[RMDB]
RNA sequence: GGGAACGACUCGAGUAGAGUCGAAAAUUAAAGGUGGUGGUGGAGGAGGUACGCCUCCAGCUGCUCAGCCGACGUACCGCACACACGCCUUUUCGGCAUAGAGCAGCAAUAGGGUAUCGAUAAAAAACUAAGUAUACCGUUUCGACGGUAUACUUAGAAAAGAAACAACAACAACAAC
Reactivity to 2A3 in 0.01 (KOAc 150mM, MgCl2 10mM, bicine 150mM(pH8.5), 24C), signal-to-noise 4, nucleotides 027 to 126: u100u030a100a030a030g040g020u080g010g030u060g010g030u040g030g040a030g000g000a020g000g020u010a020c040g080c010c000u010c000c010a020g010c000u010g000c000u000c020a040g000c000c000g020a050c000g020u020a030c020c000g030c020a030c000a010c000a030c100g070c030c000u130u160u080u030c010g010g000c020a060u090a060g010a000g000c000a000g000c000a010a060u070a040g060g000g020u030a030u110c040g030a040u250a050a160a010a030a010a010
Reactivity to DMS in 0.01 (KOAc 150mM, MgCl2 10mM, bicine 150mM(pH8.5), 24C), signal-to-noise 6, nucleotides 027 to 126: u010u010a050a080a100g010g020u010g000g010u010g010g010u000g010g010a040g020g000a080g000g010u010a020c060g010c010c000u010c050c030a070g020c010u000g010c000u000c010a060g010c020c010g010a070c240g000u000a020c070c020g010c090a100c190a120c200a080c150g000c060c110u000u000u010u000c000g000g000c010a170u010a080g000a010g000c000a010g010c000a040a030u000a030g000g000g000u000a050u000c070g000a110u020a000a050a070a070a070a100